[RMDB]
RNA sequence: GGGAACGACUCGAGUAGAGUCGAAAACUCUGCUAAUUCGUUAGCAGAGGUACACUGGGACGGGUCGGGAGGGGGAUACUCGCGGUCCCAAGAAGUAUCCAGCAAGCACAUUAUUCGUAAUGUGCAAUAUGGAUAGGGAUUUCGAUCCCUAUCCAUAAAAAGAAACAACAACAACAAC
Reactivity to 2A3 in 0.01 (KOAc 150mM, MgCl2 10mM, bicine 150mM(pH8.5), 24C), signal-to-noise 2, nucleotides 027 to 126: c000u010c000u010g010c000u000a000a020u050u100c190g060u060u020a000g040c000a000g010a000g000g000u020a050c090a030c080u070g020g030g110a060c070g020g030g160u280c170g040g070g130a270g050g020g020g000g000a000u000a000c000u000c020g030c010g060g000u000c000c010c000a000a010g020a000a000g010u010a010u030c010c000a000g060c070a030a050g010c000a000c000a000u000u000a010u050u060c120g050u050a000a000u000g000u010g000c000a000a000
Reactivity to DMS in 0.01 (KOAc 150mM, MgCl2 10mM, bicine 150mM(pH8.5), 24C), signal-to-noise 2, nucleotides 027 to 126: c000u000c000u010g000c000u010a010a050u010u020c200g020u010u000a020g000c000a000g010a010g010g000u010a070c130a140c150u000g000g000g010a110c150g000g020g000u000c100g000g010g000a130g000g000g000g000g000a010u000a000c010u000c040g010c090g020g000u010c000c020c040a060a090g000a150a070g000u000a000u000c010c030a170g010c220a060a160g020c000a010c010a000u000u000a020u010u010c150g020u000a000a010u000g000u010g010c000a030a030